[RMDB]
RNA sequence: GGGAACGACUCGAGUAGAGUCGAAAACUCUCUUGCACUGGUCAGGACGAAUAGAGCCUGACAAAACCUGAGUUAAUUGGCCGAGCGAAUGUCGUUCGCGUCAGGAGAGCACGUCCGGAGAAGCCAAGGGAAAUGUGGAGCAGGAGCAGCCAAAGUGCAUAGAACGACAGUUCGCUGUCGUUCUAUGAAAAGAAACAACAACAACAAC
Reactivity to 2A3 in 0.01 (KOAc 150mM, MgCl2 10mM, bicine 150mM(pH8.5), 24C), signal-to-noise 5, nucleotides 027 to 156: c010u030c000u000c020u020u080g010c040a050c090u060g100g000u010c000a000g020g000a020c010g080a090a060u150a190g090a090g010c000c000u020g000a000c040a010a010a010a020c020c030u030g030a050g070u100u160a090a110u180u100g020g000c030c010g010a020g000c020g030a240a130u210g080u300c040g010u020u010c010g000c010g040u010c010a010g010g030a040g000a000g010c050a010c060g060u040c010c010g060g020a060g030a070a010g000c030c040a070a050g060g000g030a000a120a080u180g020u070g000g020a020g010c030a030g030g010a020g030c050a010g020c030c000a090a060a000g060u080g030
Reactivity to DMS in 0.01 (KOAc 150mM, MgCl2 10mM, bicine 150mM(pH8.5), 24C), signal-to-noise 2, nucleotides 027 to 156: c060u000c010u000c010u000u020g020c070a140c020u010g010g030u000c010a040g020g000a070c010g020a110a170u000a170g010a190g020c000c010u000g060a030c010a060a050a070a100c020c010u000g020a080g010u000u010a060a180u000u000g030g030c030c000g020a200g020c010g020a050a120u010g040u020c050g020u000u000c020g030c080g000u000c060a050g000g020a050g000a090g000c040a060c090g000u000c000c020g000g010a160g010a100a110g010c040c010a050a060g020g000g010a040a080a090u000g000u000g020g000a180g010c070a070g000g000a050g030c050a080g000c010c020a050a040a120g020u010g000
This 207-nucleotide RNA was probed chemically with 2A3 and DMS. It was measured as part of the RMDB library OK3TST. DMS adducts were read by reverse transcription with MarathonRT. The 2A3 profile rests on 3,462 reads. The reactions ran in a buffer of 150 mM KOAc, 10 mM MgCl2 and 150 mM bicine (pH 8.5), at 24 C. The DMS profile rests on 5,201 reads.